[RMDB]
RNA sequence: GGGAACGACUCGAGUAGAGUCGAAAAUUAGUUCGAUUGCGGCCGUUGCUGCUGCUUCCUGUGGUGGUGGUGUUCAUUUUGCAGGAUUUCAGCAGCUGAGAGCACCAAAAACCGGAAGCGCUGGUCGGAGGACGGUAAAUUUCGAUUUACCGUCCUCAAAAGAAACAACAACAACAAC
Reactivity to 2A3 in 0.01 (KOAc 150mM, MgCl2 10mM, bicine 150mM(pH8.5), 24C), signal-to-noise 3, nucleotides 027 to 126: u120u080a060g060u040u100c030g050a140u050u170g150c020g010g010c000c050g170u180u140g070c060u030g020c060u070g000c020u000u040c000c020u100g090u240g040g050u040g010g070u050g020g020u010g020u050u030c050a120u070u040u120u160g020c020a030g120g240a160u080u160u100c040a020g010c030a010g000c030u000g020a030g000a000g000c010a030c000c020a020a120a050a040a000c030c040g000g010a010a000g020c020g000c040u060g000g000u010c010g010
Reactivity to DMS in 0.01 (KOAc 150mM, MgCl2 10mM, bicine 150mM(pH8.5), 24C), signal-to-noise 2, nucleotides 027 to 126: u000u000a080g010u020u000c040g020a100u020u010g000c000g070g020c050c020g020u080u000g020c120u040g000c070u020g010c030u010u000c010c000u020g010u030g030g000u030g000g000u040g020g050u020g030u000u000c000a140u000u020u030u010g020c010a120g000g000a290u000u060u050c120a050g030c020a000g010c140u010g010a080g010a030g000c000a000c030c020a030a090a020a100a000c000c000g010g030a070a000g020c100g030c010u010g000g000u000c000g000
Chemical mapping of a 177-nucleotide RNA with 2A3 and DMS. The RNA was probed in 150 mM KOAc, 10 mM MgCl2 and 150 mM bicine (pH 8.5) at 24 C. DMS adducts were read by reverse transcription with MarathonRT. The data come from the RNA Mapping Database (RMDB), library OK1LIB. Values cover nucleotides 27 to 126.